[RMDB]
RNA sequence: GGGAACGACUCGAGUAGAGUCGAAAAUGAUGAUUUGUAUAGACCGCAGUAUGCAUUUGGUGUACGAGCACAAGAUUUUGACGGUCCUCAAAGUCUGCCUAAUACUGAUAUUAUCUCACAGUACGCAGCCACGUAUUAGCUUCGGCUAAUACGUGGCAAAAGAAACAACAACAACAAC
Reactivity to 2A3 in 0.01 (KOAc 150mM, MgCl2 10mM, bicine 150mM(pH8.5), 24C), signal-to-noise 3, nucleotides 027 to 126: u170g040a040u060g000a040u090u010u120g120u100a130u050a120g020a040c030c000g010c050a000g020u080a000u170g020c020a080u090u100u150g130g000u030g010u020a010c100g110a050g090c000a010c010a080a070g090a230u020u110u110u120g060a050c020g000g020u000c000c000u050c020a000a010a090g020u000c010u000g000c000c000u120a200a070u060a040c040u010g050a070u070a110u290u070a170u100c060u010c010a010c000a000g000u020a080c060g010c080a010
Reactivity to DMS in 0.01 (KOAc 150mM, MgCl2 10mM, bicine 150mM(pH8.5), 24C), signal-to-noise 1, nucleotides 027 to 126: u000g000a000u000g020a020u000u000u010g000u000a180u010a010g010a040c040c080g010c010a190g000u000a090u040g000c150a230u020u060u000g000g020u000g000u000a040c110g050a200g090c010a160c170a060a000g000a080u000u000u000u000g000a120c140g060g060u000c030c000u030c140a060a000a010g000u000c000u010g010c030c000u000a120a040u070a010c010u000g000a020u020a090u000u040a020u000c070u000c100a110c110a130g000u000a000c270g020c040a150